[RMDB]
RNA sequence: GGGAACGACUCGAGUAGAGUCGAAAACUGUCCCGUGGUGCCCACAUCGUUUUUGGUAAUGGAGAUAAUUGUGGACAUUUGCUUUUCCUAAGUCCGGAGCACUUUUACAGCUGAGUAUAGCAUUCCAGGGACACAUGGGUAUGGAACUUGAACCACAUCUCCGUUUAUGUUUCGACAUAAACGGAGAAAAAGAAACAACAACAACAAC
Reactivity to DMS in 0.01 (KOAc 150mM, MgCl2 10mM, bicine 150mM(pH8.5), 24C), signal-to-noise 2, nucleotides 027 to 156: c040u000g000u000c000c000c000g060u000g040g060u000g000c000c010c020a040c030a100u010c070g040u030u000u000u010u000g030g010u010a080a140u000g030g020a120g030a070u010a030a090u000u030g070u000g020g000a120c030a050u010u010u000g020c030u000u000u000u010c010c050u000a110a060g010u010c020c010g000g020a120g010c090a070c110u010u000u000u000a110c060a110g010c060u000g010a160g030u010a110u010a030g030c050a190u000u000c030c030a110g000g010g020a040c050a070c060a130u000g010g000g010u010a190u010g030g010a050a060c040u000u000g000a070a180c030c010a050c090a220
Reactivity to 2A3 in 0.01 (KOAc 150mM, MgCl2 10mM, bicine 150mM(pH8.5), 24C), signal-to-noise 3, nucleotides 027 to 156: c030u070g080u040c000c010c000g010u030g000g020u030g010c020c010c020a040c030a150u050c080g060u020u020u020u050u200g080g050u120a070a050u130g070g020a030g020a110u100a120a140u150u100g030u040g060g020a040c050a060u060u070u070g060c030u060u130u070u080c000c020u090a090a060g010u020c040c010g030g000a040g040c050a040c030u080u140u090u110a080c050a100g010c040u030g020a040g100u100a060u080a130g060c010a010u050u030c040c000a010g000g000g060a020c010a000c000a080u130g010g000g030u070a070u070g060g000a050a030c040u070u140g040a030a020c000c120a000c030a070